RNA sequence: GGGAACGACUCGAGUAGAGUCGAAAAGAUAUGGAAAACUAGCUCGGGAGCUCCCACAUCUGUGAUGUAUUCGGAAACGAAUAUGCAUGGUGUGAGCGAGCUUUGAUCGAGCUAGUUUUCCUAAGUCGUAUUUACAAGGCUUCGGCCUUGUAAAUACAAAAGAAACAACAACAACAAC
Reactivity to DMS in 0.01 (KOAc 150mM, MgCl2 10mM, bicine 150mM(pH8.5), 24C), signal-to-noise 1, nucleotides 027 to 126: g000a110u020a300u000g020g010a010a000a010a010c000u000a010g000c000u000c000g010g000g000a000g000c000u000c000c020c000a000c000a000u000c000u010g040u020g010a100u020g050u000a000u000u000c000g030g000a120a150a270c000g000a040a010u000a000u000g000c030a050u000g030g000u000g010u010g030a130g020c220g020a030g000c000u000u010u000g040a100u000c020g010a000g000c010u000a010g000u000u000u000u000c000c000u010a030a060g030u010c120